[RMDB]
RNA sequence: GGGAACGACUCGAGUAGAGUCGAAAAGAUAUGGAUCGAUCCAGUGGCUCUAUGAUGACCUCGGAAACGAGCAAGUAGAGAAUCUGGAGUCGAUCCUAAGUCAAAGAUCCAUGUUCGCAUGGAUCAACCGCAACAUUAACUUCGGUUAAUGUUGCGGAAAAGAAACAACAACAACAAC
Reactivity to 2A3 in 0.01 (KOAc 150mM, MgCl2 10mM, bicine 150mM(pH8.5), 24C), signal-to-noise 1, nucleotides 027 to 126: g020a000u050a060u140g000g000a000u000c010g010a000u020c000c010a000g010u050g250g070c000u010c000u010a030u030g160a200u130g100a190c000c050u020c000g020g050a070a050a060c000g020a000g020c010a050a170g000u000a000g010a000g010a020a090u020c010u010g000g050a030g100u070c000g000a000u000c000c000u010a040a010g020u010c060a030a000a220g010a000u000c000c000a000u030g030u000u050c300g000c130a000u010g040g000a030u000c000a000a010
Reactivity to DMS in 0.01 (KOAc 150mM, MgCl2 10mM, bicine 150mM(pH8.5), 24C), signal-to-noise 1, nucleotides 027 to 126: g010a040u000a300u000g000g000a010u020c000g000a190u000c000c000a040g000u020g000g050c000u000c000u010a010u000g050a040u000g000a070c300c000u000c000g010g000a130a040a120c000g000a000g020c070a080a140g000u000a020g000a040g000a070a030u010c000u000g000g000a040g000u000c000g000a010u000c000c000u000a050a100g020u000c060a090a210a050g000a020u010c020c000a020u000g000u010u000c220g010c000a010u000g000g000a010u000c010a040a100
Source: RMDB library TTRDEL, as collected in RNAgym.
Chemical mapping of a 177-nucleotide RNA with 2A3 and DMS.
For DMS, 948 sequencing reads were counted.
For DMS the reverse transcriptase was MarathonRT.
For 2A3, 1,864 sequencing reads were counted.
Reactivities are rounded to 0.1 and cut off at 0 and 3.
2A3 adducts were read by reverse transcription with SuperScript II with manganese.